[RMDB]
RNA sequence: GGGAACGACUCGAGUAGAGUCGAAAAGCUAUUUACUGGCCUGCCCAUUCCAAGUCGGGAGUUGAGGGUUAGGGCUCGAGCGAAGGCUUGUGGUUCGGACACUCUUAGAGCGGAGGAGACUGCGUGAGGCUGGUUUCACAGAGCAGCGUCCACCUCCCUAAGGUUAACUCUUCGGAGUUAACCUUAGAAAAGAAACAACAACAACAAC
Reactivity to DMS in 0.01 (KOAc 150mM, MgCl2 10mM, bicine 150mM(pH8.5), 24C), signal-to-noise 2, nucleotides 027 to 156: g010c010u000a080u020u000u000a100c070u010g020g010c030c000u010g020c020c000c080a230u000u000c050c000a070a140g000u000c100g040g010g030a120g000u000u010g010a080g000g020g030u010u000a100g020g020g020c000u000c040g010a030g020c040g020a170a120g010g010c010u000u010g010u000g020g020u000u000c020g040g050a080c040a040c030u000c040u000u000a100g010a100g010c010g000g020a080g020g000a300g000a070c030u000g010c040g000u000g000a050g010g030c000u000g000g000u000u000u000c080a130c050a080g000a090g020c020a070g020c050g000u000c010c000a170c020c020u010c000c000
Reactivity to 2A3 in 0.01 (KOAc 150mM, MgCl2 10mM, bicine 150mM(pH8.5), 24C), signal-to-noise 4, nucleotides 027 to 156: g020c020u050a120u190u180u140a120c060u100g000g010c000c010u030g000c020c010c000a070u100u060c020c000a130a080g160u180c100g080g060g010a070g010u100u080g060a070g040g030g040u050u150a020g040g020g000c030u010c040g070a020g020c050g040a040a030g110g000c010u040u050g050u070g040g040u080u070c020g030g000a020c010a010c030u010c000u060u150a050g020a020g110c030g010g000a000g020g020a030g020a070c060u120g030c010g050u060g020a030g090g020c020u050g010g080u080u200u190c150a150c020a050g040a030g070c030a000g010c020g030u010c020c040a130c010c000u000c010c000